[RMDB]
RNA sequence: GGGAACGACUCGAGUAGAGUCGAAAAGUGCCAGAGAAGUUGUAUAUUGGGCUACCAUCCAGUGAUGCAAUGGAGGCUUAUUAGGGUUGUCAGUUUUCCACAGGGUAGCAAUUAACACUGUCUGAAAAAAACGAAACCACCUUCGGGUGGUUUCGAACAAAUUAUAUACGUUCGCGUAUAUAAUUUGAAAAGAAACAACAACAACAAC
Reactivity to 2A3 in 0.01 (KOAc 150mM, MgCl2 10mM, bicine 150mM(pH8.5), 24C), signal-to-noise 1, nucleotides 027 to 156: g040u060g050c040c000a020g000a020g010a300a030g020u040u030g040u040a100u050a080u140u120g030g060g040c050u070a080c020c000a080u100c030c020a060g020u090g030a060u040g010c000a040a090u020g000g000a000g000g030c010u110u070a150u040u230a100g030g020g000u000u030g020u050c020a010g030u010u000u220u000c060c040a020c090a040g020g030g010u050a040g000c000a010a030u110u120a050a020c020a000c060u070g010u050c030u050g020a080a090a000a000a000a020a040c000g000a000a000a000c000c000a000c000c020u010u040c080g150g020g020u000g000g000u000u000u000c000g000a000a000
Reactivity to DMS in 0.01 (KOAc 150mM, MgCl2 10mM, bicine 150mM(pH8.5), 24C), signal-to-noise 1, nucleotides 027 to 156: g050u010g030c020c020a080g000a190g020a120a150g010u000u000g050u010a120u010a150u010u000g020g010g000c030u000a130c040c040a120u010c010c000a070g000u000g110a100u010g030c120a060a040u010g000g000a230g010g050c060u000u000a080u000u000a090g030g010g000u000u000g020u000c010a060g010u000u000u000u000c020c020a070c040a090g000g030g030u010a070g020c020a060a110u010u000a070a110c050a050c030u000g010u010c010u000g000a000a050a070a070a190a010a220c020g020a020a000a030c000c000a010c010c000u000u010c300g070g060g070u000g010g020u000u000u000c000g000a030a040